[RMDB]
RNA sequence: GGGAACGACUCGAGUAGAGUCGAAAAGAUAUGGAGUCCGUUCAGGGAGCUGACAUCUCGGAAACGAGAUGUAGCUUUGAUCUGACUGCGGACUCCUAAGUCAAAGGGAUCGGUUCGCCGAUCCCAACAAGAAACAUAACUUCGGUUAUGUUUCUUGAAAAGAAACAACAACAACAAC
Reactivity to 2A3 in 0.01 (KOAc 150mM, MgCl2 10mM, bicine 150mM(pH8.5), 24C), signal-to-noise 5, nucleotides 027 to 126: g020a010u080a040u210g000g010a000g010u000c010c010g000u030u020c000a010g010g010g030a010g010c020u080g240a050c000a010u000c000u000c010g030g020a110a090a040c010g000a000g000a010u000g000u010a000g000c010u180u070u050g060a080u060c010u010g030a060c150u290g030c020g000g000a000c000u010c000c000u000a010a010g020u010c030a000a090a110g000g000g010a000u010c010g000g110u050u140c300g060c100c000g000a010u000c000c000c000a010a000
Reactivity to DMS in 0.01 (KOAc 150mM, MgCl2 10mM, bicine 150mM(pH8.5), 24C), signal-to-noise 7, nucleotides 027 to 126: g010a050u000a300u010g010g010a010g020u000c000c000g020u000u000c010a020g000g010g000a010g010c000u000g020a030c000a000u000c000u000c000g010g010a150a120a270c010g000a010g010a010u000g010u000a020g000c000u000u000u000g000a070u010c000u000g010a040c300u010g030c000g000g000a010c000u000c000c000u000a000a070g010u000c040a090a120a190g010g000g000a000u000c010g010g000u000u010c240g020c000c010g010a020u000c000c000c000a010a030

Structure probing data (2A3 and DMS) for a 177-nucleotide construct. The RNA was probed in 150 mM KOAc, 10 mM MgCl2 and 150 mM bicine (pH 8.5) at 24 C. The DMS profile rests on 12,337 reads. DMS adducts were read by reverse transcription with MarathonRT.